The record gives the reactivity of an RNA of 177 nucleotides to 2A3 and DMS. The reactions ran in a buffer of 150 mM KOAc, 10 mM MgCl2 and 150 mM bicine (pH 8.5), at 24 C.
[RMDB]
RNA sequence: GGGAACGACUCGAGUAGAGUCGAAAACAAAAGUUCAGGUGAUACAGGCAGCUGAUCCACUUGCAACCGCCUACCUAUGUGGUAUACAUCGAGAGCUUGUGCGCAGGUUGAACGCUGUGCUGCUACCGGUACUGGUGUAGUUCGCUACACCAGUACCAAAAGAAACAACAACAACAAC
Reactivity to 2A3 in 0.01 (KOAc 150mM, MgCl2 10mM, bicine 150mM(pH8.5), 24C), signal-to-noise 3, nucleotides 027 to 126: c020a000a090a040a050g060u150u120c070a060g000g040u020g030a050u050a180c020a000g030g000c020a010g000c020u070g010a170u000c000c010a010c010u020u050g000c010a030a030c020c020g020c030c000u060a060c010c010u080a090u130g100u090g090g070u230a110u070a160c030a040u040c060g030a020g000a010g130c050u170u210g040u040g050c080g000c020a010g000g000u030u040g040a030a000c010g000c020u020g000u030g040c000u000g000c020u050a040c010c010
Reactivity to DMS in 0.01 (KOAc 150mM, MgCl2 10mM, bicine 150mM(pH8.5), 24C), signal-to-noise 4, nucleotides 027 to 126: c090a100a070a090a100g020u000u000c090a140g000g030u010g030a120u010a120c050a020g010g000c030a030g010c040u000g020a050u000c070c080a040c040u010u000g010c040a060a130c110c190g000c110c030u000a090c100c020u000a030u000g010u000g010g000u010a070u020a050c050a040u000c110g020a100g000a120g020c040u000u000g030u000g020c300g000c020a010g000g000u010u000g000a020a130c120g000c030u010g000u000g000c010u000g000c050u000a040c050c050